[RMDB]
Structure probing data (DMS and 2A3) for a 207-nucleotide construct. As a SHAPE reagent, 2A3 marks flexible, mostly unpaired nucleotides at the ribose 2'-OH. Source: RMDB library RNAMAK, as collected in RNAgym. For 2A3, 7,075 sequencing reads were counted. The RNA was probed in 150 mM KOAc, 10 mM MgCl2 and 150 mM bicine (pH 8.5) at 24 C.
RNA sequence: GGGAACGACUCGAGUAGAGUCGAAAACCGUAGGUAAGGGCCGAACCGUGGACAGUACGACGAAGACGGAUUCGAAAGAGUCCGUCAGAGUACUGCCACGGUCUAGACAGCCCUUACCUAAACGGAAAACUCAUAGUCAGUUCGCUGACUAUGAGAACAAAAUUAUUGAGUUCGCUCAAUAAUUUUGAAAAGAAACAACAACAACAAC
Reactivity to DMS in 0.01 (KOAc 150mM, MgCl2 10mM, bicine 150mM(pH8.5), 24C), signal-to-noise 3, nucleotides 027 to 156: c000c000g020u010a020g010g030u000a000a000g010g030g100c000c130g000a080a040c000c000g020u010g010g030a100c000a030g020u000a010c020g000a300c170g020a150a200g000a010c000g040g010a030u000u000c000g020a220a120a300g000a020g000u000c010c000g030u000c000a010g000a200g010u000a020c000u010g000c000c000a000c000g000g010u020c010u000a060g030a180c070a080g010c010c010c010u000u000a000c010c010u000a010a010a070c010g000g000a080a060a070a130c000u000c000a030u000a000g000u000c000a020g000u000u000c300g050c000u000g020a010c000u000a000u010g000a020g000a100a130
Reactivity to 2A3 in 0.01 (KOAc 150mM, MgCl2 10mM, bicine 150mM(pH8.5), 24C), signal-to-noise 4, nucleotides 027 to 156: c000c000g010u010a010g010g000u000a000a010g010g010g000c030c030g030a050a010c000c000g010u020g010g030a120c010a000g010u050a010c110g140a050c080g040a300a020g000a010c010g010g010a000u010u020c020g040a090a130a100g010a030g010u000c010c060g000u000c000a000g000a010g000u000a000c000u000g010c000c010a000c000g000g000u000c000u020a010g020a010c040a010g010c000c000c000u000u000a000c000c000u000a000a000a000c000g010g020a050a070a040a050c000u000c000a000u000a020g000u000c010a000g000u050u130c220g050c130u010g000a000c000u000a010u000g000a000g000a000a000